[RMDB]
RNA sequence: GGGAACGACUCGAGUAGAGUCGAAAAGCUGUGGGUCUGAUAGAUGCAGAUGAGGCAGGCGAGAUGCUGGGCCUGUAUGUCCCUGGGAAGGGGGCACAGCUGUUGCUGUGGCUGCCUGCUGGCCUGGAUGUGUCCAUUGGUUCGCCAAUGGACACAUAAAAGAAACAACAACAACAAC
Reactivity to 2A3 in 0.01 (KOAc 150mM, MgCl2 10mM, bicine 150mM(pH8.5), 24C), signal-to-noise 1, nucleotides 027 to 126: g000c040u080g000u110g100g000g000u030c040u080g090a080u190a170g150a050u150g000c060a020g000a060u110g100a080g060g000c020a000g080g040c030g030a050g030a050u140g000c030u070g000g000g010c010c000u000g020u000a030u060g010u030c030c010c000u030g010g060g140a000a090g060g000g000g000g010c000a000c000a000g010c020u090g100u250u300g040c000u010g040u060g040g000c010u030g090c010c000u010g020c020u020g000g050c000c010u020g080g050
Reactivity to DMS in 0.01 (KOAc 150mM, MgCl2 10mM, bicine 150mM(pH8.5), 24C), signal-to-noise 2, nucleotides 027 to 126: g000c020u000g000u040g000g010g020u000c000u000g000a100u020a040g030a070u040g000c060a020g000a110u010g010a150g000g000c010a150g030g000c040g000a130g000a130u020g010c040u010g010g000g030c040c020u000g010u020a030u000g010u000c000c030c020u000g010g020g040a100a140g000g000g000g000g000c000a000c040a030g000c000u010g000u020u020g010c030u000g010u000g000g000c050u000g030c010c020u000g010c020u020g010g000c040c020u000g000g000